[RMDB]
Notes
Chemical mapping of a 177-nucleotide RNA with DMS and 2A3.

RNA sequence: GGGAACGACUCGAGUAGAGUCGAAAAUGAGUGCUUGUGAGGCUCGUUCAGGGAAUUUUGACACUGCUUAUGAAAUACAAGCAUUUUUGUCAGGUCAAGAUGUGUCUUUGCAGCAAAAGAAGCGUCGAAGACCAAUUAGGUUCGCCUAAUUGGUCUUAAAAGAAACAACAACAACAAC
Reactivity to DMS in 0.01 (KOAc 150mM, MgCl2 10mM, bicine 150mM(pH8.5), 24C), signal-to-noise 8, nucleotides 027 to 126: u010g010a060g020u000g010c030u000u000g020u000g010a130g010g000c020u000c100g010u000u010c050a060g010g010g030a110a080u000u010u000u000g010a080c040a090c150u000g000c060u010u000a080u010g000a060a080a100u010a060c120a040a040g000c020a030u000u000u000u000u010g000u000c020a040g000g000u000c030a040a050g000a020u000g010u000g000u000c010u000u000u000g010c040a040g000c110a040a050a080a070g010a080a060g020c060g010u000c070g010
Reactivity to 2A3 in 0.01 (KOAc 150mM, MgCl2 10mM, bicine 150mM(pH8.5), 24C), signal-to-noise 5, nucleotides 027 to 126: u160g010a020g030u060g010c020u090u060g030u010g110a080g000g070c030u020c080g050u070u030c040a030g050g050g080a140a120u120u090u080u100g020a020c040a020c170u020g030c010u080u080a070u160g110a060a100a040u220a080c060a050a000g000c000a040u050u040u000u020u080g050u030c010a000g000g020u020c010a010a020g020a040u040g040u010g020u050c030u010u030u060g020c040a050g000c020a010a030a050a060g070a060a010g030c020g070u050c050g040
Reactivities are given for positions 27 through 126.
The 2A3 profile rests on 5,955 reads.
The data come from the RNA Mapping Database (RMDB), library OK2TST.